RNA sequence: GGGAACGACUCGAGUAGAGUCGAAAAGAUAAACAUGGCAGUUGCUUUAGAUCAGUGGUUCUACAGGGCAAUGUCUAGAGACAUUUGUGGUUGUCACAACAGGGUUGGGCAGGGUACGUGCUACUGGAUAGAGAUGAGCAUUCGUGCUCAUCUCUAUAAAAGAAACAACAACAACAAC
Reactivity to DMS in 0.01 (KOAc 150mM, MgCl2 10mM, bicine 150mM(pH8.5), 24C), signal-to-noise 1, nucleotides 027 to 126: g000a090u000a060a090a130c130a080u010g010g000c070a070g000u010u000g030c000u000u000u000a080g010a100u010c050a040g030u000g020g000u000u000c080u000a060c200a130g010g000g010c150a040a010u000g010u000c010u040a100g020a120g000a040c050a050u000u000u000g010u010g000g000u000u030g000u000c080a060c080a030a090c150a100g020g000g000u010u000g000g000g010c140a090g000g000g030u020a060c100g020u000g030c040u000a100c130u000g010g010